[RMDB]
RNA sequence: GGGAACGACUCGAGUAGAGUCGAAAAUUAGUAAAAUGAAAUCCUGAGUCUAGUUAUAUCCUGGUUUCCAUCAAGAAGAAGGCCGACCAUGAUCAGUUCUGUUUCGGCAACAUGACAUUUUUAAUCUCAACUCAUCAUUAGGCACCUACUGUGUGUCGUCUAUCCAAUCAUUCGUGAUUGGAUAGACAAAAGAAACAACAACAACAAC
Reactivity to DMS in 0.01 (KOAc 150mM, MgCl2 10mM, bicine 150mM(pH8.5), 24C), signal-to-noise 1, nucleotides 027 to 156: u000u000a110g030u000a080a100a150a100u010g000a100a040a200u010c010c030u000g000a070g020u000c010u000a130g000u000u000a040u010a110u000c010c020u000g020g020u000u000u020c050c010a130u000c000a080a130g020a130a120g010a230a150g010g000c050c030g000a110c120c020a050u000g020a080u010c060a090g000u000u000c060u010g000u000u000u010c060g060g000c070a050a050c060a070u020g000a120c060a030u000u030u010u000u010a020a150u000c000u000c060a040a040c060u010c040a030u000c030a120u000u010a150g000g010c010a030c000c030u040a120c130u010g050u030g030u010g030u000c120
Reactivity to 2A3 in 0.01 (KOAc 150mM, MgCl2 10mM, bicine 150mM(pH8.5), 24C), signal-to-noise 3, nucleotides 027 to 156: u090u080a030g060u080a010a030a080a220u120g040a110a110a020u040c000c010u040g020a040g030u020c050u050a010g010u080u050a070u020a050u210c000c030u030g060g000u010u060u020c060c030a040u070c040a080a080g040a050a020g020a050a040g130g000c030c000g030a010c010c020a030u090g010a060u060c040a060g020u090u030c040u040g060u060u100u050c000g000g010c000a030a010c040a070u090g050a020c010a040u040u020u020u040u170a130a130u060c080u010c070a030a130c030u010c060a100u010c030a060u140u150a040g020g000c010a000c020c030u240a220c100u110g060u040g000u000g020u210c020